[RMDB]
RNA sequence: GGGAACGACUCGAGUAGAGUCGAAAACACAAGUGGCAGUAACUCCCGCCACUGCUGCUGAUUAGGGUUCAGACUAUGGGUCUAUAGUAGCCAAUUGGAGUGAACUAUUGUUCCCUAUCCAGGUGACCCAUCACUAUGUCUUCGGACAUAGUGAUGGAAAAGAAACAACAACAACAAC
Reactivity to DMS in 0.01 (KOAc 150mM, MgCl2 10mM, bicine 150mM(pH8.5), 24C), signal-to-noise 3, nucleotides 027 to 126: c090a090c080a120a000g030u000g000g020c000a030g000u000a120a080c130u000c050c030c090g000c130c110a010c000u000g010c040u010g000c000u010g010a190u020u010a070g000g000g020u000u000c060a110g000a070c070u000a080u010g010g010g020u000c020u000a090u000a060g010u000a130g010c000c040a100a100u010u010g000g010a090g020u000g020a060a080c030u000a110u010u000g010u010u000c000c000c000u010a110u000c030c100a100g000g010u010g000a140c150
Reactivity to 2A3 in 0.01 (KOAc 150mM, MgCl2 10mM, bicine 150mM(pH8.5), 24C), signal-to-noise 2, nucleotides 027 to 126: c090a000c040a080a000g000u010g020g000c010a000g000u100a070a050c060u040c010c000c010g040c020c010a010c000u000g000c000u020g010c020u020g030a130u080u120a080g010g040g000u020u080c060a010g040a060c030u100a130u200g110g040g030u000c020u020a070u040a070g070u020a010g010c010c020a070a220u120u190g070g000a130g050u070g020a070a020c010u020a070u170u160g000u050u050c020c010c000u000a050u010c060c050a040g110g000u030g120a020c000

Record summary: Chemical mapping of a 177-nucleotide RNA with DMS and 2A3. For 2A3 the reverse transcriptase was SuperScript II with manganese. Conditions: 150 mM KOAc, 10 mM MgCl2 and 150 mM bicine (pH 8.5), 24 C.